[RMDB]
RNA sequence: GGGAACGACUCGAGUAGAGUCGAAAAAAUUUUGGCCUCAACGUCUCAGUACUAAGGUGAAAGUGGAGCCGCAAACCCUCUUCGAAGAGGUUAGGCUCCAUCUCUGAGGCUCCCGAGACAAGGUUCGCAUCACAAGUACGUUCGCGUACUUGUGAUGAAAAGAAACAACAACAACAAC
Reactivity to DMS in 0.01 (KOAc 150mM, MgCl2 10mM, bicine 150mM(pH8.5), 24C), signal-to-noise 4, nucleotides 027 to 126: a020a060u000u010u010u020g010g000c040c000u000c060a080a200c120g000u010c010u020c050a110g020u020a090c080u010a070a160g010g000u000g030a060a100a100g010u000g020g000a010g000c000c000g000c210a090a110a060c300c000c000u000c000u010u040c280g010a150a030g000a030g010g010u000u020a060g000g000c020u010c000c000a000u010c020u010c050u000g000a090g010g000c040u010c130c030c060g000a060g010a060c050a080a050g020g010u000u000c070g020
Reactivity to 2A3 in 0.01 (KOAc 150mM, MgCl2 10mM, bicine 150mM(pH8.5), 24C), signal-to-noise 6, nucleotides 027 to 126: a000a020u220u210u050u090g040g020c020c000u010c010a060a060c050g020u000c020u000c050a090g050u140a150c050u090a140a070g180g030u110g150a090a030a020g040u020g000g000a000g000c010c000g010c040a050a130a170c030c010c020u010c060u170u150c150g220a190a080g030a040g010g000u030u060a030g010g000c000u000c000c000a000u000c000u000c000u000g010a010g000g000c010u030c020c020c020g050a010g010a010c070a050a040g070g020u070u100c050g000
This 177-nucleotide RNA was probed chemically with DMS and 2A3. DMS adducts were read by reverse transcription with MarathonRT. Conditions: 150 mM KOAc, 10 mM MgCl2 and 150 mM bicine (pH 8.5), 24 C. It was measured as part of the RMDB libraries RFM100 and RFMREP. 2A3 adducts were read by reverse transcription with SuperScript II with manganese.